This 177-nucleotide RNA was probed chemically with 2A3 and DMS.
High DMS reactivity at an A or C suggests that its Watson-Crick edge is free.
The 2A3 profile rests on 1,093 reads.
Source: RMDB library OK1LIB, as collected in RNAgym.
The DMS profile rests on 1,015 reads.
DMS adducts were read by reverse transcription with MarathonRT.
Conditions: 150 mM KOAc, 10 mM MgCl2 and 150 mM bicine (pH 8.5), 24 C.
RNA sequence: GGGAACGACUCGAGUAGAGUCGAAAAGCGAGACCAACCACUAACCCAGCUCCACCAAGAACCAAUAUCCAUAAUGGUACAUCGUUCUCUUCUACCACUUGUUGGUUGAUAUAAAUGGAGUACAUGGUCUCCUCAGAUCCUUCGGGAUCUGAGGAGAAAAAGAAACAACAACAACAAC
Reactivity to 2A3 in 0.01 (KOAc 150mM, MgCl2 10mM, bicine 150mM(pH8.5), 24C), signal-to-noise 3, nucleotides 027 to 126: g080c030g020a050g010a040c010c000a000a020c030c090a070c090u070a060a070c000c000c000a000g000c010u000c020c010a030c030c010a070a040g060a040a010c000c000a030a010u110a070u190c030c040a090u120a240a170u230g040g000u040a030c010a100u050c070g050u070u010c060u040c000u110u010c060u100a060c000c040a020c060u090u080g050u040u010g120g000u000u090g000a020u030a050u060a110a180a070u050g000g030a000g030u020a030c030a060u100g020g020
Reactivity to DMS in 0.01 (KOAc 150mM, MgCl2 10mM, bicine 150mM(pH8.5), 24C), signal-to-noise 1, nucleotides 027 to 126: g060c060g000a000g000a010c010c060a030a160c220c110a240c200u000a020a110c000c000c010a180g000c010u000c000c000a040c020c100a070a090g030a120a050c000c000a000a070u060a000u070c130c070a110u000a010a150u000g010g000u000a140c170a110u000c110g000u000u010c000u000c040u000u000c020u000a020c000c050a000c250u000u000g020u060u000g000g000u010u000g020a000u020a160u010a020a050a070u000g000g000a080g000u000a020c280a010u000g090g000